This 177-nucleotide RNA was probed chemically with 2A3 and DMS. The 2A3 profile rests on 3,053 reads.

RNA sequence: GGGAACGACUCGAGUAGAGUCGAAAAGAAAGAACGAUUUUCGGCUGGAGAUGACAGCGCGGUUUUUGAGGACGUCUUUUGUCCGUGCGGUACCGCCCUCCUUGGUCGGCUCCGCCUACUCGGCGGUUAGAGUGUUUCAGUUCGCUGAAACACUCUAAAAAGAAACAACAACAACAAC
Reactivity to 2A3 in 0.01 (KOAc 150mM, MgCl2 10mM, bicine 150mM(pH8.5), 24C), signal-to-noise 5, nucleotides 027 to 126: g110a010a100a030g070a070a020c080g080a100u040u050u030u050c000g000g010c000u030g030g000a060g010a060u130g050a070c040a070g040c090g000c030g050g040u080u110u030u120u190g080a100g010g000a000c020g150u210c160u070u150u110u140g010u000c010c010g000u060g090c080g050g040u060a020c000c010g010c000c000c010u040c000c050u080u110g060g000u020c010g010g000c010u020c010c010g000c000c000u070a140c070u040c010g010g010c010g000g000u000
Reactivity to DMS in 0.01 (KOAc 150mM, MgCl2 10mM, bicine 150mM(pH8.5), 24C), signal-to-noise 3, nucleotides 027 to 126: g020a080a070a100g010a100a140c160g000a120u030u000u000u000c020g000g010c020u000g020g010a050g010a140u030g000a050c080a050g030c190g030c020g020g010u000u010u010u010u010g000a100g000g010a020c030g010u020c140u030u030u040u030g030u000c000c020g000u010g020c090g000g020u000a040c000c020g010c040c020c020u000c100c080u010u020g010g010u000c010g010g000c030u020c000c010g000c090c000u000a030c090u000c060g000g000c010g020g000u010